[RMDB]
RNA sequence: GGGAACGACUCGAGUAGAGUCGAAAAUGGGUAUCGGCUAUUGCCUGAGUGUGCUAGAGUCCUCGAAGAGUAACUGCUGACCUUAUUCACUGGCUGUGGGCCUUAUGGCACAGUCAGUCACCAGGUUAAUCCGUCUACCUUUCGAGGUAGACGGAUUAAAAGAAACAACAACAACAAC
Reactivity to 2A3 in 0.01 (KOAc 150mM, MgCl2 10mM, bicine 150mM(pH8.5), 24C), signal-to-noise 4, nucleotides 027 to 126: u100g020g000g000u030a040u050c010g030g000c030u040a040u110u150g020c000c010u010g000a020g040u130g000u080g030c020u050a030g000a010g130u070c030c000u010c030g060a040a030g020a020g020u080a050a040c050u080g000c010u010g010a050c000c000u050u090a080u130u140c020a000c010u000g000g000c000u000g000u030g020g120g090c040c000u160u280a240u300g000g000c000a000c000a020g000u020c000a000g000u010c000a010c010c010a000g100g000u010u020
Reactivity to DMS in 0.01 (KOAc 150mM, MgCl2 10mM, bicine 150mM(pH8.5), 24C), signal-to-noise 2, nucleotides 027 to 126: u030g010g000g010u000a040u000c050g000g040c040u000a040u020u000g050c030c000u000g000a100g000u020g010u000g050c030u000a060g010a180g000u000c050c030u000c070g000a080a090g000a200g000u000a030a050c100u000g000c100u020g000a040c050c060u000u020a040u010u010c150a030c000u010g010g000c020u000g020u010g000g040g000c020c010u020u000a060u020g010g000c000a030c010a000g010u020c000a080g000u010c230a070c200c120a090g000g030u000u000